[RMDB]
Description:
This 177-nucleotide RNA was probed chemically with 2A3. The RNA was probed in 150 mM KOAc, 10 mM MgCl2 and 150 mM bicine (pH 8.5) at 24 C. Values are in units of 0.01, from 0 to 300, in steps of 10. Source: RMDB library M2PK50, as collected in RNAgym. The 2A3 profile rests on 936 reads.
RNA sequence: GGGAACGACUCGAGUAGAGUCGAAAAACCUGAUGAUUCGUCAUCAGGUCACAUGCCGCCCGAACGGCUUCGUGACCGGGCGGAUUCACUUUAAAUGGAGCACUGCUGCAUCAUUCGUGAUGCAGAACUUCCAAAGCUGCUUCGGCAGCUUUGGAAGAAAAGAAACAACAACAACAAC
Reactivity to 2A3 in 0.01 (KOAc 150mM, MgCl2 10mM, bicine 150mM(pH8.5), 24C), signal-to-noise 1, nucleotides 027 to 126: a000c000c000u010g010a000u010g000a010u020u040c190g090u020c100a000u020c100a000g000g020u000c010a050c000a060u150g020c000c020g010c000c000c000g010a040a010c030g070g040c030u200u230c030g000u000g030a020c010c020g000g000g000c020g000g000a000u110u130c030a070c030u150u240u230a090a140a060u160g030g000a020g030c050a030c220u140g000c050u010g010c000a000u010c000a010u000u130c180g060u050g000a000u010g000c010a000g010a000a000